[RMDB]
RNA sequence: GGGAACGACUCGAGUAGAGUCGAAAAGAACGUUGGAAGGCGCUUCCGUGAAAGCGGAAUUCUUUCAUACCAAGAACGGGAAAACCGGAAGGAGUUGGCGGACGGAUGUGGGGUAUGAGCCGAGAAAGGGAUUAUCUUUCUUCGGAAAGAUAAUCCCAAAAGAAACAACAACAACAAC
Reactivity to DMS in 0.01 (KOAc 150mM, MgCl2 10mM, bicine 150mM(pH8.5), 24C), signal-to-noise 2, nucleotides 027 to 126: g000a090a050c050g000u000u010g010g000a050a060g000g000c300g010c270u000u000c000c010g000u000g000a060a090a100g000c000g010g020a010a030u050u020c060u000u020u000c020a060u050a040c050c050a050a090g040a130a110c000g000g010g000a070a040a070a100c050c010g050g050a080a020g010g010a150g000u010u000g030g000c090g000g000a110c150g000g000a090u020g030u040g000g040g050g000u010a030u010g000a060g000c060c040g030a110g010a060a050a110
Reactivity to 2A3 in 0.01 (KOAc 150mM, MgCl2 10mM, bicine 150mM(pH8.5), 24C), signal-to-noise 2, nucleotides 027 to 126: g080a070a010c110g000u090u010g000g020a080a000g010g030c070g000c170u040u000c000c000g000u000g130a090a020a000g010c030g050g010a030a040u070u000c000u060u110u040c020a020u080a100c030c050a070a010g090a030a030c010g000g010g000a030a060a040a160c060c000g050g010a010a020g050g010a040g020u060u040g030g030c050g060g000a020c000g050g000a060u060g070u000g040g020g000g020u080a010u120g020a020g020c000c010g030a030g070a020a030a000
Chemical mapping of a 177-nucleotide RNA with DMS and 2A3.
For 2A3, 758 sequencing reads were counted.
Source: RMDB library OK1LIB, as collected in RNAgym.
The RNA was probed in 150 mM KOAc, 10 mM MgCl2 and 150 mM bicine (pH 8.5) at 24 C.